Source: RMDB library M2PK90, as collected in RNAgym. The record gives the reactivity of an RNA of 177 nucleotides to 2A3 and DMS.
[RMDB]
RNA sequence: GGGAACGACUCGAGUAGAGUCGAAAAUGAAAUAGCGUGUGCAAGACGCUGAUCUUGCCAUGAUCUGGAACUUUAGUGCUGAGGUCCGAGUACCAGGGUAUCAUGUCGGACCUUAGCACUAAUUAAAACACCUCCUUAGGUUCGCCUAAGGAGGUGUAAAAGAAACAACAACAACAAC
Reactivity to 2A3 in 0.01 (KOAc 150mM, MgCl2 10mM, bicine 150mM(pH8.5), 24C), signal-to-noise 1, nucleotides 027 to 126: u130g010a030a000a030u170a060g010c020g000u050g080u120g000c020a000a000g010a000c030g120c300u100g010a210u000c000u000u000g010c000c010a000u040g060a120u020c000u060g030g120a000a060c020u020u030u020a000g000u000g010c020u000g000a000g000g020u000c010c000g000a040g010u010a060c010c030a150g120g180g070u090a040u240c140a170u160g090u100c000g010g030a000c000c000u010u000a010g000c010a010c010u020a010a010u000u000a000a000a040
Reactivity to DMS in 0.01 (KOAc 150mM, MgCl2 10mM, bicine 150mM(pH8.5), 24C), signal-to-noise 2, nucleotides 027 to 126: u000g000a080a080a120u000a060g010c030g000u000g000u000g030c010a020a030g020a020c010g040c300u030g000a080u000c000u000u000g000c020c010a010u000g000a080u010c050u010g020g010a110a140c060u000u000u000a000g010u000g000c000u000g000a000g000g010u000c000c010g000a030g020u000a050c110c110a110g020g010g020u020a040u000c090a120u010g000u000c010g010g000a020c000c000u000u000a000g010c000a000c000u000a000a000u010u000a030a040a060

Reactivities are given for positions 27 through 126. DMS adducts were read by reverse transcription with MarathonRT. Conditions: 150 mM KOAc, 10 mM MgCl2 and 150 mM bicine (pH 8.5), 24 C. For DMS, 2,162 sequencing reads were counted.